[RMDB]
RNA sequence: GGGAACGACUCGAGUAGAGUCGAAAAGAAAGAAAGAAAGGAGGGGAACGGGGGAUGGAAGGACGGGAAGUGGAAGUCCUGAUACCCAUCCUACACCCCCCUGCCUUCCACCCUCCGGCCCCCCGAAGAAGGAUCAUAUGUUCGCAUAUGAUCCUUCAAAAGAAACAACAACAACAAC
Reactivity to 2A3 in 0.01 (KOAc 150mM, MgCl2 10mM, bicine 150mM(pH8.5), 24C), signal-to-noise 3, nucleotides 027 to 126: g090a000a050a000g110a020a080a020g120a060a090a030g050g040a130g010g010g010g010a210a090c000g000g000g000g000g000a000u000g020g010a000a000g010g010a040c010g000g010g000a080a060g030u050g040g040a060a010g050u070c030c030u040g010a020u090a120c030c030c000a020u030c010c010u030a030c030a050c020c010c000c000c000c000u010g000c000c000u000u000c000c000a000c010c000c000u020c010c010g020g000c000c020c000c000c000c000g010a050a010
Reactivity to DMS in 0.01 (KOAc 150mM, MgCl2 10mM, bicine 150mM(pH8.5), 24C), signal-to-noise 3, nucleotides 027 to 126: g000a100a040a070g040a090a080a110g000a080a110a120g000g000a080g020g000g010g020a040a060c020g020g020g000g010g000a040u000g010g000a010a020g000g000a030c070g000g020g020a090a070g000u010g010g000a100a080g010u020c050c030u020g010a120u030a100c050c060c030a110u000c020c010u010a090c030a110c030c030c050c000c000c000u000g010c010c000u030u000c000c020a020c040c000c000u000c000c000g010g000c020c010c000c010c000c010g000a010a090
This 177-nucleotide RNA was probed chemically with 2A3 and DMS. For 2A3 the reverse transcriptase was SuperScript II with manganese. DMS adducts were read by reverse transcription with MarathonRT. The RNA was probed in 150 mM KOAc, 10 mM MgCl2 and 150 mM bicine (pH 8.5) at 24 C. The data come from the RNA Mapping Database (RMDB), libraries RFM100 and RFMREP.